RNA sequence: GGGAACGACUCGAGUAGAGUCGAAAACUCCUCGUUGUCAGAAAAGGAUUUGAAGAGGGAAAUUUGCCGUGCUUAUUCUGAACUCAACCGUUUGAUUGCUAAGGGUGAACCCCGUUUGAUUUGCAAGCAGGUUUAUGCUUUUCGAAGCAUAAACCUGAAAAGAAACAACAACAACAAC
Reactivity to DMS in 0.01 (KOAc 150mM, MgCl2 10mM, bicine 150mM(pH8.5), 24C), signal-to-noise 2, nucleotides 027 to 126: c090u000c000c020u000c130g050u010u020g000u000c040a120g000a060a040a160a150g000g020a150u010u000u000g000a070a070g020a210g020g000g010a060a060a100u010u000u000g000c080c060g030u000g010c040u000u000a060u000u000c070u000g010a100a120c060u010c040a060a110c080c060g020u000u000u000g010a090u000u000g010c030u000a090a120g000g000g000u000g030a060a140c080c010c000c070g000u000u010u000g020a130u000u010u010g000c160a060a100g000